[RMDB]
RNA sequence: GGGAACGACUCGAGUAGAGUCGAAAAUGGGCAAGGGGGCCGCAAGGCCUCCCGGCUGCAAGGUUAUUCACGUCAGCUGGCCUCCUGCCGGGUACCUUGGCAUGGGGCGAGAUCCAAGGGUGCUGGCCUUCCUUGCAGCGUGCGACUGCGCGGCGUGGGAUAGUAAGUCGUUCGCGACUUACUAUCCAAAAGAAACAACAACAACAAC
Reactivity to 2A3 in 0.01 (KOAc 150mM, MgCl2 10mM, bicine 150mM(pH8.5), 24C), signal-to-noise 1, nucleotides 027 to 156: u080g000g040g000c010a040a010g030g010g000g000g000c000c000g030c030a020a010g000g000c000c000u050c020c010c010g030g000c010u000g000c020a010a020g020g000u110u160a140u210u280c100a030c090g010u020c010a030g010c000u040g040g010c000c000u010c000c010u020g000c000c010g000g040g070u140a200c050c000u080u200g000g000c020a020u000g000g000g070g000c040g000a060g000a060u020c040c030a080a010g090g070g040u130g000c000u030g010g000c000c000u030u000c040c000u010u000g000c000a000g010c000g000u010g000c020g060a080c020u050g000c050g040c090g040g000c020g010u080g090
Chemical mapping of a 207-nucleotide RNA with 2A3. For 2A3 the reverse transcriptase was SuperScript II with manganese. For 2A3, 805 sequencing reads were counted. Source: RMDB library RSTRND, as collected in RNAgym.